This 177-nucleotide RNA was probed chemically with DMS. For DMS, 622 sequencing reads were counted. Values cover nucleotides 27 to 126.
RNA sequence: GGGAACGACUCGAGUAGAGUCGAAAAAACAAAAGCAGAUAGUGUUUGGCGUUCACCACAGCGUAAUCCCAGCUGAUGCCAUGGAUAAUAGACUCCUACCAAUGAAAAUGAGCUGGAGUGCCUUGGGCUAGAGACCCUGGUUCGCCAGGGUCUCUAGAAAAGAAACAACAACAACAAC
Reactivity to DMS in 0.01 (KOAc 150mM, MgCl2 10mM, bicine 150mM(pH8.5), 24C), signal-to-noise 1, nucleotides 027 to 126: a060a060c070a070a120a050a100g010c010a040g010a170u000a150g040u000g000u000u020u000g000g000c040g010u000u000c110a100c160c070a110c100a010g000c100g010u010a060a040u010c000c010c000a210g010c030u000g000a090u000g000c100c010a040u000g000g000a110u000a130a090u000a090g010a070c030u000c010c070u020a070c070c010a140a120u010g010a150a070a010a240u000g000a040g010c080u000g000g000a090g010u010g010c040c020u000u010g010g000g010
Conditions: 150 mM KOAc, 10 mM MgCl2 and 150 mM bicine (pH 8.5), 24 C. The data come from the RNA Mapping Database (RMDB), library OK2TRN.